An RNA of 177 nucleotides, treated with DMS and 2A3 and read out base by base. The data come from the RNA Mapping Database (RMDB), library OK1LIB. For DMS the reverse transcriptase was MarathonRT.

RNA sequence: GGGAACGACUCGAGUAGAGUCGAAAACACGUUCAAGGGUCCAACAUGUCUCCCGCUAACGUAAUGACACGUAUCCACACCAGGACCAGCAGGCCCCAUCUAAACUACGCGAGCCAGGCAUAGGUCAAGAUACAGACCACUUCGGUGGUCUGUAUCUAAAAGAAACAACAACAACAAC
Reactivity to DMS in 0.01 (KOAc 150mM, MgCl2 10mM, bicine 150mM(pH8.5), 24C), signal-to-noise 2, nucleotides 027 to 126: c080a220c020g000u000u020c140a050a080g010g000g040u000c010c130a030a110c180a030u000g010u000c050u000c000c020c000g040c050u010a010a050c100g010u040a080a080u050g010a110c110a070c070g040u010a130u000c040c070a110c020a050c070c040a050g000g000a010c100c010a070g050c050a040g000g010c000c000c000c040a100u020c070u040a020a130a050c150u020a060c040g030c000g020a110g020c030c050a040g020g000c030a040u010a070g000g010u000c110a120
Reactivity to 2A3 in 0.01 (KOAc 150mM, MgCl2 10mM, bicine 150mM(pH8.5), 24C), signal-to-noise 3, nucleotides 027 to 126: c040a020c020g040u060u020c040a100a060g040g000g050u030c060c030a060a030c050a130u120g060u000c050u080c040c010c000g000c070u060a100a040c030g050u070a080a050u150g020a000c030a040c080g080u030a070u060c060c000a030c010a010c040c030a050g040g030a030c010c000a010g050c000a000g000g060c050c000c000c010a040u000c040u160a030a080a050c030u110a060c040g030c010g040a010g060c010c010a030g040g000c010a050u060a080g000g100u040c050a060
The DMS profile rests on 2,392 reads. The 2A3 profile rests on 2,451 reads. The reactions ran in a buffer of 150 mM KOAc, 10 mM MgCl2 and 150 mM bicine (pH 8.5), at 24 C. DMS (dimethyl sulfate) methylates the pairing face of unpaired adenines and cytosines.